[RMDB]
RNA sequence: GGGAACGACUCGAGUAGAGUCGAAAACUAAGAUUACACUGGUCCGAGUUGCCGGUUUCAAGCACGUGUGGUCUGGAUGAUAGAGACUGAUGGUAGGUGUACGGACUAGCUGCACGAGCCCACCGAGGGCCUGUUAGGCCUUCGGGCCUAACAGGCCAAAAGAAACAACAACAACAAC
Reactivity to 2A3 in 0.01 (KOAc 150mM, MgCl2 10mM, bicine 150mM(pH8.5), 24C), signal-to-noise 1, nucleotides 027 to 126: c040u030a090a160g040a030u150u050a000c010a000c110u100g000g000u030c030c010g110a140g040u150u010g140c000c000g000g000u080u110u220c070a060a010g000c040a000c150g010u010g000u040g000g050u000c000u030g060g090a120u120g030a030u160a080g100a040g070a000c000u090g020a080u150g190g090u000a110g010g020u000g030u030a050c000g000g090a000c030u030a070g090c070u130g000c000a030c020g150a040g000c010c010c010a000c000c060g030a270g040
This 177-nucleotide RNA was probed chemically with 2A3.
The reactions ran in a buffer of 150 mM KOAc, 10 mM MgCl2 and 150 mM bicine (pH 8.5), at 24 C.
It was measured as part of the RMDB library OK1LIB.